[RMDB]
An RNA of 207 nucleotides, treated with DMS and 2A3 and read out base by base. Conditions: 150 mM KOAc, 10 mM MgCl2 and 150 mM bicine (pH 8.5), 24 C. Reactivities are given for positions 27 through 156. It was measured as part of the RMDB library RSTRND. The 2A3 profile rests on 2,713 reads.

RNA sequence: GGGAACGACUCGAGUAGAGUCGAAAAGCUAGGUCUUUGGUACCAAACAUUGGCGGUAACACCCCAAUGUAGAGUCUGUUGGGGCAGACGGGUAAAAAUCCAAAGAAUAGAGACAAUCCGCAGCUGACCUGGCCAAAAGUAUAUUUACAAAGUAGCUACUUUAAAUAAACUUCGGUUUAUUUAAAGUAAAAGAAACAACAACAACAAC
Reactivity to DMS in 0.01 (KOAc 150mM, MgCl2 10mM, bicine 150mM(pH8.5), 24C), signal-to-noise 1, nucleotides 027 to 156: g040c060u000a040g030g020u000c000u000u010u020g030g000u000a110c010c030a220a250a060c020a020u000u000g010g030c040g040g010u000a080a130c090a300c000c000c000c000a010a000u010g000u000a130g030a210g000u000c000u010g000u000u000g010g000g020g040c020a050g020a060c000g020g020g000u000a000a070a090a150a140u000c010c020a010a040a080g010a030a150u010a040g020a110g010a050c040a020a050u010c050c030g000c040a050g010c080u010g010a100c080c050u000g010g030c030c020a080a080a080a200g000u030a050u010a100u010u000u000a170c070a090a160a140g030u000a060g000c060u010
Reactivity to 2A3 in 0.01 (KOAc 150mM, MgCl2 10mM, bicine 150mM(pH8.5), 24C), signal-to-noise 3, nucleotides 027 to 156: g030c020u030a010g020g110u000c000u020u010u000g010g010u010a010c030c000a050a020a000c000a010u010u020g050g010c130g090g040u060a060a020c040a300c090c000c010c000a000a000u000g000u020a070g020a020g100u000c010u010g030u060u090g060g000g020g000c000a000g000a010c020g030g000g000u060a080a110a060a030a060u010c020c000a010a000a010g020a010a030u100a030g090a000g000a020c030a030a060u040c030c030g020c070a020g010c030u030g010a060c020c000u010g020g020c010c000a070a060a060a000g040u020a070u040a070u210u220u100a100c050a030a170a040g040u030a030g010c010u000